The record gives the reactivity of an RNA of 207 nucleotides to 2A3 and DMS. The DMS profile rests on 2,891 reads. The reactions ran in a buffer of 150 mM KOAc, 10 mM MgCl2 and 150 mM bicine (pH 8.5), at 24 C. For 2A3, 5,403 sequencing reads were counted. For DMS the reverse transcriptase was MarathonRT.
RNA sequence: GGGAACGACUCGAGUAGAGUCGAAAACUAAGUUGGUGACGCCGAGUGGAGUAAAGACGGAGAACCUCCGCUAGUCGGAAAGACUCCGCUUCCUCCGGCUGACCCUCCUUCAGCUCGCCGCUAGUCGAGCGGACAACUGAGUGAGUAGCCCCAACCCGUUGUAUUAGUUCUUCGGAACUAAUACAACAAAAGAAACAACAACAACAAC
Reactivity to 2A3 in 0.01 (KOAc 150mM, MgCl2 10mM, bicine 150mM(pH8.5), 24C), signal-to-noise 5, nucleotides 027 to 156: c040u070a070a040g040u030u030g020g020u020g020a040c040g000c010c030g060a160g030u040g010g020a020g030u160a070a090a050g080a100c010g000g000a000g010a040a050c020c020u010c010c000g020c030u070a080g170u300c000g000g000a040a080a020g060a040c000u000c000c000g000c000u010u000c000c010u000c000c000g000g010c000u000g020a010c010c010c010u010c000c000u050u050c040a020g010c010u050c050g020c020c010g010c040u040a050g150u240c100g090a010g000c010g000g010a070c040a070a050c040u060g000a010g030u080g020a010g030u070a040g060c010c010c010c000a010a040c030c020c030
Reactivity to DMS in 0.01 (KOAc 150mM, MgCl2 10mM, bicine 150mM(pH8.5), 24C), signal-to-noise 2, nucleotides 027 to 156: c050u000a040a300g040u000u010g020g000u000g010a180c170g020c070c000g000a130g020u000g000g030a070g060u010a080a040a120g000a090c040g030g040a060g000a100a210c210c030u000c020c000g030c030u010a080g020u020c000g000g000a090a080a110g020a300c020u010c030c010g030c000u000u000c040c010u000c040c000g020g000c040u000g030a100c220c010c020u000c020c030u000u000c020a030g020c000u010c100g020c040c010g030c030u010a160g020u000c200g020a220g010c010g020g010a070c010a010a030c000u000g000a060g000u010g000a080g010u000a070g030c030c000c030c020a100a130c060c080c080